[RMDB]
RNA sequence: GGGAACGACUCGAGUAGAGUCGAAAAGAUAUGGAGUCCUACGGAGCAACAGCACGUGGUUCGGAAACGAACCCGUGACAUGCUCCAGGACUCCUAAGUCAAACGAGGCCACUUCGGUGGCCUCGAACAGUAAUAAGAUCUUCGGAUCUUAUUACUGAAAAGAAACAACAACAACAAC
Reactivity to DMS in 0.01 (KOAc 150mM, MgCl2 10mM, bicine 150mM(pH8.5), 24C), signal-to-noise 6, nucleotides 027 to 126: g000a020u000a080u020g000g000a030g010u000c000c000u000a190c300g030g010a030g030c000a130a080c240a140g010c000a010c000g010u010g030g010u000u000c000g020g000a020a020a040c000g010a010a010c000c000c000g020u000g000a010c040a290u020g010c000u000c000c000a020g000g000a010c000u010c000c000u000a000a050g000u000c000a150a140a230c030g010a020g010g010c000c000a010c010u000u020c230g020g010u000g000g000c000c010u000c000g000a020a060
Reactivity to 2A3 in 0.01 (KOAc 150mM, MgCl2 10mM, bicine 150mM(pH8.5), 24C), signal-to-noise 6, nucleotides 027 to 126: g010a000u030a000u070g000g010a010g010u000c020c000u090a240c300g000g010a010g030c120a140a240c110a300g030c010a020c040g150u300g000g010u000u010c010g010g000a010a010a000c000g000a000a000c000c010c000g000u010g010a000c000a070u300g000c000u000c000c000a000g000g000a000c000u020c000c000u000a000a000g000u000c010a050a050a100c030g010a000g000g000c000c010a000c020u130u160c300g140g000u010g000g020c000c000u000c000g000a000a000